Conditions: 150 mM KOAc, 10 mM MgCl2 and 150 mM bicine (pH 8.5), 24 C. The record gives the reactivity of an RNA of 207 nucleotides to 2A3. The data come from the RNA Mapping Database (RMDB), library OK3TST.
RNA sequence: GGGAACGACUCGAGUAGAGUCGAAAAGACUACAGAAGUAUCCUGUGCGGGUGACUCGGGAAGAGCAGAGCCACCCUGCCCGGCUUUAUACAGGCUGCCACAGCUAUGACGAGAUCUGCUGCAAGACAGGUGGAGGCAGGCGGGCAGUCAGGGUGGAACGCAUGCUAUACUUCGGUAUAGCAUGCGUAAAAGAAACAACAACAACAAC
Reactivity to 2A3 in 0.01 (KOAc 150mM, MgCl2 10mM, bicine 150mM(pH8.5), 24C), signal-to-noise 2, nucleotides 027 to 156: g020a010c030u050a010c120a050g110a160a030g130u100a040u180c020c040u080g040u060g070c100g030g000g030u050g030a060c000u010c010g030g080g130a090a030g010a040g040c050a000g000a000g060c010c000a010c000c000c000u010g000c000c000c000g070g000c070u150u190u030a110u030a060c100a040g000g030c000u000g000c020c010a140c040a130g000c020u160a300u300g010a030c000g000a020g010a020u000c010u010g010c000u040g100c100a060a090g090a210c020a020g000g030u000g000g030a010g010g020c000a000g010g010c000g000g000g030c010a000g010u000c010a000g020g010g040u050g040g010a060